The record gives the reactivity of an RNA of 177 nucleotides to DMS and 2A3. 2A3 adducts were read by reverse transcription with SuperScript II with manganese.
RNA sequence: GGGAACGACUCGAGUAGAGUCGAAAAGCCUCACAAGGACAUCCAUGGUUAACAGUGAUUUAUCCUGGCUCUCUGGUGAACUUACUAGGCAAGGAGCAUCAGUCUAAGUAACAGGUGGUUAUUAAUGGAAAACAGCAUAAUUCGUUAUGCUGUUUUCAAAAGAAACAACAACAACAAC
Reactivity to DMS in 0.01 (KOAc 150mM, MgCl2 10mM, bicine 150mM(pH8.5), 24C), signal-to-noise 9, nucleotides 027 to 126: g010c010c010u010c100a080c180a110a110g000g010a070c070a050u000c030c040a060u010g000g020u000u010a070a070c070a070g020u000g000a070u010u010u020a080u020c020c010u000g000g010c070u000c080u000c040u010g010g010u000g000a060a090c110u010u010a050c060u010a060g010g010c070a070a060g000g000a080g010c060a040u010c040a060g000u010c060u010a070a090g000u010a070a060c070a050g010g020u010g010g020u010u010a060u010u010a060a100u020g010
Reactivity to 2A3 in 0.01 (KOAc 150mM, MgCl2 10mM, bicine 150mM(pH8.5), 24C), signal-to-noise 8, nucleotides 027 to 126: g030c010c000u060c010a070c030a030a070g050g010a030c010a030u020c030c010a050u130g110g000u090u140a110a040c020a050g040u030g120a090u030u080u110a070u070c010c010u020g020g000c000u010c010u000c010u030g020g010u050g030a050a030c010u020u090a050c020u060a030g060g070c050a050a060g040g000a030g050c010a040u040c020a010g080u000c020u080a100a040g030u030a050a040c020a040g050g030u040g010g060u090u030a100u080u090a120a090u070g060

For DMS the reverse transcriptase was MarathonRT. Conditions: 150 mM KOAc, 10 mM MgCl2 and 150 mM bicine (pH 8.5), 24 C.